Structure probing data (DMS and 2A3) for a 170-nucleotide construct. The DMS profile rests on 56,067 reads. Conditions: 150 mM KOAc, 10 mM MgCl2 and 150 mM bicine (pH 8.5), 24 C. Reactivities are given for positions 27 through 129. The 2A3 profile rests on 50,714 reads. For DMS the reverse transcriptase was MarathonRT.
[RMDB]
RNA sequence: GGGAACGACUCGAGUAGAGUCGAAAACCAGGGAUUUUCCUCCUCUAGUUUCUUGAGUUUCUUCUUGGUCUUCCGGAGGUCCCUCUCGAGCUCUUCCGCUUUCUUUCUUCCAUUGACCCACUGCUCGCCAGAAUUCGGUUCGCCGAAUUCAAAAGAAACAACAACAACAAC
Reactivity to DMS in 0.01 (KOAc 150mM, MgCl2 10mM, bicine 150mM(pH8.5), 24C), signal-to-noise 9, nucleotides 027 to 129: c020c010a060g020g020g010a100u000u000u000u010c020c020u030c040c010u020c070u030a100g010u030u010u010c030u000u000g020a170g030u000u000u000c040u000u000c060u000u000g020g040u050c060u020u010c040c060g010g020a120g000g040u010c050c010c020u020c020u000c040g000a120g010c100u000c040u000u010c020c040g040c060u010u020u030c020u040u020u020c030u000u050c030c050a090u030u050g000a130c050c000c030a080c080u000g000c090u000c020g040c100c060a080
Reactivity to 2A3 in 0.01 (KOAc 150mM, MgCl2 10mM, bicine 150mM(pH8.5), 24C), signal-to-noise 9, nucleotides 027 to 129: c000c000a000g030g030g010a030u080u090u100u130c010c020u020c000c010u020c030u030a080g030u030u090u040c030u030u110g050a070g060u040u050u020c010u040u010c010u020u060g030g000u030c010u080u020c030c010g030g010a020g010g040u040c020c000c000u000c000u010c000g040a030g000c020u010c000u060u020c030c020g030c040u020u050u010c000u020u060u010c000u040u000c020c010a070u020u110g110a110c010c000c010a030c030u050g010c020u030c050g070c040c010a040